[RMDB]
Conditions: 150 mM KOAc, 10 mM MgCl2 and 150 mM bicine (pH 8.5), 24 C. An RNA of 177 nucleotides, treated with 2A3 and DMS and read out base by base. It was measured as part of the RMDB library OK2TRN.
RNA sequence: GGGAACGACUCGAGUAGAGUCGAAAAACGCUCGCGUCGCUCGCCGCGCAAUGGUAUUCGGACGAGGCGGAUAUCGCGGAAGCCAACGCGAACGUCGCGCUUCGCGCAGGCGCGCUCGUGCGCGUGAUCAUAGUAGGCUAUUCGUAGCCUACUAUGAAAAAGAAACAACAACAACAAC
Reactivity to 2A3 in 0.01 (KOAc 150mM, MgCl2 10mM, bicine 150mM(pH8.5), 24C), signal-to-noise 7, nucleotides 027 to 126: a000c010g010c010u010c010g010c010g010u030c040g010c020u020c070g060c010c010g000c010g000c060a090a270u300g090g020u150a140u100u160c060g060g050a100c070g100a110g090g090c010g020g010a030u030a010u060c020g000c010g030g050a050a010g050c040c040a050a020c000g000c020g030a050a030c060g020u010c020g010c000g000c070u050u060c030g020c010g000c090a110g010g010c010g000c010g010c020u030c020g020u020g000c020g010c000g010u020g020a010
Reactivity to DMS in 0.01 (KOAc 150mM, MgCl2 10mM, bicine 150mM(pH8.5), 24C), signal-to-noise 9, nucleotides 027 to 126: a050c030g020c030u000c010g010c020g010u000c300g010c010u000c080g010c070c010g010c020g020c170a120a090u010g000g020u000a090u000u000c040g010g010a130c120g000a060g010g010c000g000g000a030u000a030u000c010g010c030g000g000a120a070g010c080c140a080a040c010g020c010g010a020a040c050g010u000c030g010c020g010c030u000u000c040g010c030g030c030a070g020g000c010g010c080g010c030u000c040g020u000g010c040g000c000g010u000g010a130
Notes:
2A3 is a SHAPE reagent: it acylates the 2'-hydroxyl of flexible nucleotides of all four kinds. Values are in units of 0.01, from 0 to 300, in steps of 10.